[RMDB]
RNA sequence: GGGAACGACUCGAGUAGAGUCGAAAAGAUAUGGAUCGCCAGGACAUGAACGCUCGGAAACGAGAUGUUCAACAGCCUGAGCGAUCCUAAGUCAAAACCUGCAUAACGCUUCGGCGUUAUGCAGGAACUUAAAUCCAGAGUUCGCUCUGGAUUUAAGAAAAGAAACAACAACAACAAC
Reactivity to DMS in 0.01 (KOAc 150mM, MgCl2 10mM, bicine 150mM(pH8.5), 24C), signal-to-noise 4, nucleotides 027 to 126: g010a030u000a300u010g000g000a010u000c010g020c010c000a020g010g000a100c130a200u000g010a010a010c000g010c000u000c000g020g010a070a060a190c010g010a020g000a040u000g010u000u000c000a020a090c250a150g000c000c000u000g000a110g030c000g000a010u000c000c010u000a010a070g000u010c050a120a080a090a140c000c000u000g010c010a010u020a000a010c000g010c000u000u020c160g010g000c000g010u000u000a000u000g000c000a010g000g000a000a040
Reactivity to 2A3 in 0.01 (KOAc 150mM, MgCl2 10mM, bicine 150mM(pH8.5), 24C), signal-to-noise 3, nucleotides 027 to 126: g010a010u020a020u070g000g000a010u000c010g000c010c000a020g030g020a170c070a260u070g000a010a000c000g000c020u000c000g020g000a030a030a010c010g010a010g080a140u140g020u000u010c000a040a040c080a070g060c000c000u010g020a060g010c000g000a000u000c000c000u000a000a010g000u000c010a000a020a090a240c010c000u010g000c010a010u000a000a000c010g000c020u050u120c300g180g000c000g000u000u010a000u000g000c000a000g000g000a000a000
This 177-nucleotide RNA was probed chemically with DMS and 2A3. For 2A3, 7,332 sequencing reads were counted. High 2A3 reactivity points to a flexible backbone, as in loops and unpaired stretches. DMS adducts were read by reverse transcription with MarathonRT.